[RMDB]
RNA sequence: GGGAACGACUCGAGUAGAGUCGAAAAGAUAUGGAACCACUGAGCGAGGUAGGAUCCCUCGGAAACGAGAACUCCUACUACCCACCGCUCGUGGUUCCUAAGUCAAAGCCAACGUUCGCGUUGGCAACAACGUCAACAGGUUCGCCUGUUGACGUUGAAAAGAAACAACAACAACAAC
Reactivity to DMS in 0.01 (KOAc 150mM, MgCl2 10mM, bicine 150mM(pH8.5), 24C), signal-to-noise 3, nucleotides 027 to 126: g000a060u000a300u010g000g000a020a000c000c000a010c000u020g040a010g000c000g010a080g010g000u000a000g000g010a010u010c020c050c000u000c000g000g000a050a120a120c000g000a030g000a190a030c090u010c000c000u000a000c000u000a020c070c020c080a300c100c010g000c000u000c000g010u010g000g000u000u010c000c000u000a000a030g020u000c010a100a140a120g000c000c000a010a000c020g020u000u010c240g010c020g020u000u000g000g000c010a040a030
Reactivity to 2A3 in 0.01 (KOAc 150mM, MgCl2 10mM, bicine 150mM(pH8.5), 24C), signal-to-noise 2, nucleotides 027 to 126: g010a000u090a040u120g030g020a010a010c000c040a040c200u300g000a000g000c020g030a030g000g050u000a000g010g020a010u040c000c000c030u010c010g000g030a060a050a000c010g000a010g060a090a000c010u010c010c000u000a000c000u010a020c020c020c020a080c030c030g000c010u000c000g000u000g010g010u010u000c010c010u000a010a010g010u020c040a050a080a060g010c000c000a000a000c000g050u060u080c300g000c010g140u000u000g010g000c000a000a000